[RMDB]
RNA sequence: GGGAACGACUCGAGUAGAGUCGAAAAGACGCCUGUGUGGCGAAGCGAGAAUGAGAAAGUGCCGCACAUUAAACAGUCCAUCUAGCGGCAAGAUGGAUUGCUCGCAAAAAGAUCCAUAUCACCGAGACAUGGUAGUCCCUUUCGAGGGACUACCAUGAAAAGAAACAACAACAACAAC
Reactivity to 2A3 in 0.01 (KOAc 150mM, MgCl2 10mM, bicine 150mM(pH8.5), 24C), signal-to-noise 2, nucleotides 027 to 126: g010a000c060g050c000c000u030g060u010g050u100g070g000c020g000a030a000g040c040g020a000g040a110a130u160g000a040g130a080a090a010g140u060g050c000c000g040c000a000c010a010u030u100a040a110a060c020a000g010u000c010c000a000u000c000u000a020g040c030g020g000c050a000a000g020a000u000g000g000a000u000u020g010c000u000c020g000c000a030a020a020a040a020g060a030u030c010c000a030u080a020u080c050a050c040c030g010a030g000a050
Reactivity to DMS in 0.01 (KOAc 150mM, MgCl2 10mM, bicine 150mM(pH8.5), 24C), signal-to-noise 1, nucleotides 027 to 126: g000a070c050g000c000c000u000g050u000g000u010g010g000c000g030a050a240g000c000g000a000g010a230a020u000g040a160g000a140a020a150g000u010g040c000c030g110c000a070c160a050u010u130a050a030a270c050a050g060u000c000c040a000u010c000u000a090g000c070g000g010c050a010a000g000a010u000g000g030a030u010u010g010c000u010c020g000c030a020a200a100a070a000g010a000u000c010c030a020u010a070u000c150a080c060c030g010a170g040a300